The record gives the reactivity of an RNA of 177 nucleotides to DMS and 2A3. The RNA was probed in 150 mM KOAc, 10 mM MgCl2 and 150 mM bicine (pH 8.5) at 24 C. For 2A3 the reverse transcriptase was SuperScript II with manganese. The DMS profile rests on 1,978 reads. It was measured as part of the RMDB library M2PK50.
RNA sequence: GGGAACGACUCGAGUAGAGUCGAAAAAAGGACUGGUUCGCCAGUCCUUAUUCAUUCGUUCGCAACGAAGCGUAAGUCAUUACGCAAAUGACUAAAAGCGUAUACGAAAGGACUUCGGUCCUUUCAAUAGCUAGUUCCUAUUCGUAGGAACUAGCUAAAAAGAAACAACAACAACAAC
Reactivity to DMS in 0.01 (KOAc 150mM, MgCl2 10mM, bicine 150mM(pH8.5), 24C), signal-to-noise 3, nucleotides 027 to 126: a060a020g000g000a020c010u000g000g000u000u000c220g050c000c000a010g000u000c000c000u000u000a010u000u010c030a150u020u010c050g010u000u010c100g000c080a180a110c080g000a060a040g020c010g010u000a100a030g010u010c100a030u000u000a040c230g000c160a030a030a040u000g000a060c080u000a050a070a060a230g000c040g020u010a090u010a110c210g000a000a010a010g000g000a020c000u000u010c160g020g000u000c000c000u020u000u000c000a060a100
Reactivity to 2A3 in 0.01 (KOAc 150mM, MgCl2 10mM, bicine 150mM(pH8.5), 24C), signal-to-noise 1, nucleotides 027 to 126: a000a000g020g010a020c020u010g020g020u040u070c100g010c050c000a000g010u000c000c000u010u020a000u000u020c000a000u010u020c000g000u010u000c020g010c120a070a000c050g080a060a020g030c020g010u050a020a040g020u060c030a060u020u040a060c030g020c120a020a040a070u060g020a020c020u040a000a000a180a060g010c030g030u100a050u040a130c060g000a010a000a000g000g010a000c010u020u070c270g050g000u000c000c000u010u000u000c000a000a020